[RMDB]
RNA sequence: GGGAACGACUCGAGUAGAGUCGAAAAUGUUGAGGAAGGCCAGAAUAAUAUUGCGUAUGACUGGCGGUGCGUAAUCCGCCAAGCGCAGGUAGCCGCGAAAGCCGAGUGCCAGUACAUCAACCAGACUCACCUAAUAAAACUUCGGUUUUAUUAGGUGAAAAGAAACAACAACAACAAC
Reactivity to 2A3 in 0.01 (KOAc 150mM, MgCl2 10mM, bicine 150mM(pH8.5), 24C), signal-to-noise 4, nucleotides 027 to 126: u090g000u010u040g010a030g030g020a060a060g040g000c020c010a050g100a080a070u190a140a050u110a060u130u090g000c000g010u040a070u230g150a130c060u020g010g000c030g000g010u040g000c190g060u100a070a050u010c010c010g000c000c000a010a000g020c010g000c000a000g050g030u040a010g040c080c020g050c030g090a090a030a000g020c040c020g000a010g040u150g000c010c000a010g030u050a040c010a090u030c010a000a030c010c020a020g030a060c020u000
Reactivity to DMS in 0.01 (KOAc 150mM, MgCl2 10mM, bicine 150mM(pH8.5), 24C), signal-to-noise 3, nucleotides 027 to 126: u010g030u000u010g010a080g020g020a200a140g020g020c020c040a110g010a130a070u000a080a160u020a130u010u000g020c030g030u000a110u010g010a080c220u000g010g000c000g020g000u000g000c210g000u020a120a100u000c010c000g000c010c010a010a130g000c020g000c010a020g000g010u000a040g010c040c040g010c100g010a070a070a090g010c050c040g000a090g010u020g020c000c010a060g000u010a060c070a040u010c050a030a070c020c110a080g010a160c140u000